[RMDB]
RNA sequence: GGGAACGACUCGAGUAGAGUCGAAAAAAGGACAGCCUGUUUUUCUGGUUGAUGGUGGGAAGUGGUACAAGUCUGCUUUUAAAUCCCUUGGACUGGAUUUUGUUCACGUAACCUUCGGGCCGAGGAAGAUGUAGUGAGUGUUCGCACUCACUACAUCAAAAGAAACAACAACAACAAC
Reactivity to 2A3 in 0.01 (KOAc 150mM, MgCl2 10mM, bicine 150mM(pH8.5), 24C), signal-to-noise 1, nucleotides 027 to 126: a000a030g070g020a050c030a020g060c000c010u040g070u020u070u000u010u060c060u060g030g000u020u040g050a070u040g010g040u030g030g030g050a080a030g040u030g050g010u050a060c010a070a020g040u020c020u020g090c000u020u050u010u080a050a130a070u130c000c000c000u000u050g010g000a000c000u020g000g040a040u000u030u040u280g060u080u020c040a040c170g020u060a010a060c030c000u010u020c000g010g000g020c030c010g010a010g010g010a070a060
Reactivity to DMS in 0.01 (KOAc 150mM, MgCl2 10mM, bicine 150mM(pH8.5), 24C), signal-to-noise 4, nucleotides 027 to 126: a050a060g010g010a110c080a090g000c050c020u000g020u000u000u000u000u000c040u010g010g010u000u010g030a070u010g020g010u000g020g000g020a100a080g010u000g020g010u000a050c110a070a090g020u010c030u000g000c090u020u000u000u000a030a080a130u010c060c000c040u000u000g000g000a070c060u000g010g000a070u000u010u010u010g010u000u000c070a110c220g000u020a060a080c050c180u010u000c050g020g010g020c020c030g010a050g010g010a100a080
Structure probing data (2A3 and DMS) for a 177-nucleotide construct.
Values are in units of 0.01, from 0 to 300, in steps of 10.
For 2A3 the reverse transcriptase was SuperScript II with manganese.